[RMDB]
RNA sequence: GGGAACGACUCGAGUAGAGUCGAAAAGAUAUGGAUGUAUCAUGGUACUGCUACCUCCGAUAAGACGUACUCGGAAACGAGUAUACGUCUUUUGACGGAGAUGCAGUACCAUGAUACAUCCUAAGUCCUUUUAGACACCGUUCGCGGUGUCUAAAAGAAAAGAAACAACAACAACAAC
Reactivity to DMS in 0.01 (KOAc 150mM, MgCl2 10mM, bicine 150mM(pH8.5), 24C), signal-to-noise 2, nucleotides 027 to 126: g000a090u000a270u000g010g010a000u010g020u000a010u010c000a000u000g010g000u000a000c010u000g000c010u000a170c130c000u000c000c000g030a230u010a020a010g010a030c010g020u010a060c000u000c000g010g010a100a120a200c020g010a030g010u000a070u000a030c010g000u000c000u000u000u010u020g000a180c210g000g000a020g010a030u000g010c010a000g020u000a000c000c000a000u010g000a000u000a000c000a000u000c000c000u000a000a140g010u010c050